Structure probing data (2A3 and DMS) for a 177-nucleotide construct. DMS adducts were read by reverse transcription with MarathonRT. The RNA was probed in 150 mM KOAc, 10 mM MgCl2 and 150 mM bicine (pH 8.5) at 24 C. Source: RMDB library OK1LIB, as collected in RNAgym. For 2A3, 709 sequencing reads were counted.
RNA sequence: GGGAACGACUCGAGUAGAGUCGAAAAGAAACGGAAACGGAAAUAAAGCUGUCGAAGACGGAAACUAUGUAUCUAUAUCAUCAUAGUGAAAAGACAGCGAAAAGAUAUAGAUAGAACGUCGAAGAAAGGGAUGUCAUACUUUCGAGUAUGACAUCCCAAAAGAAACAACAACAACAAC
Reactivity to 2A3 in 0.01 (KOAc 150mM, MgCl2 10mM, bicine 150mM(pH8.5), 24C), signal-to-noise 1, nucleotides 027 to 126: g000a030a150a000c010g000g000a060a000a000c110g090g170a200a130a000u200a050a270a020g000c000u000g000u220c070g060a020a020g130a000c030g070g000a070a260a000c000u000a110u300g000u000a000u300c000u060a000u100a000u060c060a000u060c030a000u000a050g040u000g020a060a060a060a060g020a020c010a060g000c000g000a000a000a000a000g000a000u000a000u000a000g000a000u000a000g100a110a000c000g030u020c000g000a000a060g160a100a070a000
Reactivity to DMS in 0.01 (KOAc 150mM, MgCl2 10mM, bicine 150mM(pH8.5), 24C), signal-to-noise 2, nucleotides 027 to 126: g030a030a070a100c090g010g020a080a030a070c080g010g000a070a000a080u040a100a140a170g000c000u000g050u000c000g000a190a300g000a170c110g020g080a170a110a000c160u040a020u000g000u000a000u020c000u010a000u000a010u010c000a020u010c080a090u000a080g030u010g000a140a010a080a130g000a020c070a000g000c060g000a050a020a060a030g000a040u040a040u010a000g000a050u000a030g060a140a190c060g000u000c090g010a080a150g010a050a160a040